[RMDB]
RNA sequence: GGGAACGACUCGAGUAGAGUCGAAAAUAGCGCAGUUCGCUGCGCUAGAUGCGUACUACGAACGGUAGUCCGGUUCUACCCACCAACUCCCAAAUAGGAGUUGAGGAACACGGACUAUAAUCGUUCGUAUCGCUAAACCUCAAGCUUCGGCUUGAGGGACAUUAGCGUUCUUCGGAACGCUAAUGUCAAAAGAAACAACAACAACAAC
Reactivity to DMS in 0.01 (KOAc 150mM, MgCl2 10mM, bicine 150mM(pH8.5), 24C), signal-to-noise 2, nucleotides 027 to 156: u000a020g000c000g000c010a020g060u000u010c300g000c030u010g030c040g050c000u000a000g010a110u000g000c030g000u000a110c140u000a010c010g000a030a000c000g080g010u010a030g000u000c000c000g020g020u000u010c050u000a030c030c010c010a300c150c000a030a020c000u000c000c000c010a020a290a300u000a060g020g050a050g050u000u000g000a130g020g000a040a030c020a170c020g010g010a000c000u000a020u000a120a090u000c030g000u000u000c010g030u000a000u000c000g030c010u000a060a060a280c000c010u000c000a000a000g010c000u020u000c300g030g000c000u010u000g010a010g000g000
Reactivity to 2A3 in 0.01 (KOAc 150mM, MgCl2 10mM, bicine 150mM(pH8.5), 24C), signal-to-noise 5, nucleotides 027 to 156: u050a000g020c020g000c000a010g010u090u090c190g080c120u000g010c010g000c000u020a000g000a030u180g030c010g000u030a080c050u000a010c060g010a000a010c010g000g060u030a000g000u030c010c000g010g000u010u000c000u050a140c050c070c040a030c010c000a020a000c000u060c030c030c060a190a300a090u300a120g010g000a000g000u000u010g010a030g050g020a030a000c300a060c120g000g010a000c000u000a000u020a010a040u070c000g000u000u000c000g000u000a010u060c010g000c000u030a060a160a090c000c010u000c010a010a000g000c000u030u260c290g090g000c000u000u020g000a000g000g000